[RMDB]
RNA sequence: GGGAACGACUCGAGUAGAGUCGAAAAGGAAAUAGGUAUGCGGUCGCUAUUAAUAUAUUGCGACAAACUGGCACACAGCAAGCGAGUGGUGACGAGUGCACACAAGUCGUUCCCAGCCAGAAAAAAAUCAGUAAAUACUGUUCGCAGUAUUUACUGAAAAAGAAACAACAACAACAAC
Reactivity to DMS in 0.01 (KOAc 150mM, MgCl2 10mM, bicine 150mM(pH8.5), 24C), signal-to-noise 3, nucleotides 027 to 126: g000g000a030a090a120u010a050g000g040u000a050u000g010c120g020g000u000c020g030c010u000a180u010u010a090a080u020a090u000a040u000u010g020c000g000a040c030a020a110a080c090u010g000g000c020a080c090a060c100a040g020c050a040a090g000c050g010a090g030u000g010g010u000g010a050c050g010a120g000u000g000c050a010c080a060c080a080a030g020u000c000g010u000u000c000c000c000a100g000c070c110a060g030a010a000a030a080a040a080a110
Reactivity to 2A3 in 0.01 (KOAc 150mM, MgCl2 10mM, bicine 150mM(pH8.5), 24C), signal-to-noise 3, nucleotides 027 to 126: g070g010a070a100a000u120a110g030g030u140a060u100g080c100g050g000u020c010g020c010u020a020u070u030a210a030u150a030u080a020u200u140g010c000g020a000c000a000a070a000c020u030g040g000c030a020c010a010c010a050g020c020a090a040g030c030g070a030g070u080g040g040u030g030a020c030g020a030g060u130g050c030a010c000a000c000a050a010g010u010c000g000u010u010c000c010c000a010g020c010c010a030g000a090a090a030a000a000a030a080